An RNA of 177 nucleotides, treated with 2A3 and DMS and read out base by base. For DMS the reverse transcriptase was MarathonRT. High 2A3 reactivity points to a flexible backbone, as in loops and unpaired stretches. Source: RMDB library M2PK50, as collected in RNAgym. The RNA was probed in 150 mM KOAc, 10 mM MgCl2 and 150 mM bicine (pH 8.5) at 24 C.
RNA sequence: GGGAACGACUCGAGUAGAGUCGAAAAGUUGUAAACUUCGGUUUACAACAAAUAAGAGAGAAAAGCUGUCCAUCGCUCUUCCAAGCGACAACGGAACCAAAAAAACCCAGCUCUUCGGAGCUGGGAACACAAGUAUAACCUUCGGGUUAUACUUGUGAAAAGAAACAACAACAACAAC
Reactivity to 2A3 in 0.01 (KOAc 150mM, MgCl2 10mM, bicine 150mM(pH8.5), 24C), signal-to-noise 2, nucleotides 027 to 126: g000u000u010g010u010a030a030a000c010u010u020c150g050g000u000u020u000a000c000a000a000c000a000a040a000u080a030a020g130a010g030a010g100a030a090a050a070g070c110u110g040u080c030c020a020u020c010g010c010u020c030u120u000c010c020a040a030g030c010g030a020c010a090a000c040g030g030a050a050c050c010a040a030a030a010a030a040a050c010c000c000a000g010c000u010c000u020u030c220g120g010a000g000c000u000g010g000g010a000a000
Reactivity to DMS in 0.01 (KOAc 150mM, MgCl2 10mM, bicine 150mM(pH8.5), 24C), signal-to-noise 2, nucleotides 027 to 126: g010u000u000g000u000a000a020a020c020u000u040c170g050g010u000u000u000a000c010a000a000c000a060a120a050u020a060a110g000a110g000a100g000a110a070a110a100g010c080u000g000u000c010c050a160u000c040g000c010u000c040u000u000c110c130a080a060g010c030g000a000c100a060a100c100g000g020a080a090c080c160a000a010a050a100a090a130a100c000c000c000a000g010c000u010c020u000u010c180g010g010a020g010c000u000g010g000g000a000a050